[RMDB]
RNA sequence: GGGAACGACUCGAGUAGAGUCGAAAAGAUAUGGACCAGGUGGGAGCCUAUCGAUCGGAAACGAUCGUAAGGGCGACGAUCACCGUCCUAAGUCAAACAUAAACCUCUGUUCGCAGAGGUUUAUGAACAUUAUGUGUCCCUUCGGGGACACAUAAUGAAAAGAAACAACAACAACAAC
Reactivity to 2A3 in 0.01 (KOAc 150mM, MgCl2 10mM, bicine 150mM(pH8.5), 24C), signal-to-noise 3, nucleotides 027 to 126: g010a000u010a010u040g020g000a000c050c200a120g030g020u010g000g010g000a010g000c000c010u030a040u050c000g000a020u000c000g010g030a000a000a010c010g000a010u000c010g000u030a300a300g040g000g000c000g010a060c010g010a020u000c000a000c010c010g020u000c000c010u020a000a000g020u010c010a070a160a070c020a010u000a000a000a010c000c000u030c000u030g040u100u100c300g000c130a000g000a000g000g000u000u000u000a000u000g000a010a000
Reactivity to DMS in 0.01 (KOAc 150mM, MgCl2 10mM, bicine 150mM(pH8.5), 24C), signal-to-noise 3, nucleotides 027 to 126: g010a020u000a020u010g000g000a030c020c130a190g000g000u000g000g000g000a020g020c000c010u000a120u000c000g020a000u000c010g010g000a000a010a020c010g020a010u000c000g010u000a020a130g020g010g040c010g020a040c250g000a030u010c010a000c010c000g000u000c000c000u010a000a090g000u000c020a160a100a250c010a010u010a000a000a010c000c000u000c000u000g000u000u010c190g030c010a000g000a010g000g000u000u000u000a000u000g010a120a200
Record summary: The record gives the reactivity of an RNA of 177 nucleotides to 2A3 and DMS. Reactivities are rounded to 0.1 and cut off at 0 and 3. The RNA was probed in 150 mM KOAc, 10 mM MgCl2 and 150 mM bicine (pH 8.5) at 24 C. For 2A3 the reverse transcriptase was SuperScript II with manganese. The 2A3 profile rests on 4,218 reads. The data come from the RNA Mapping Database (RMDB), library TTRDEL.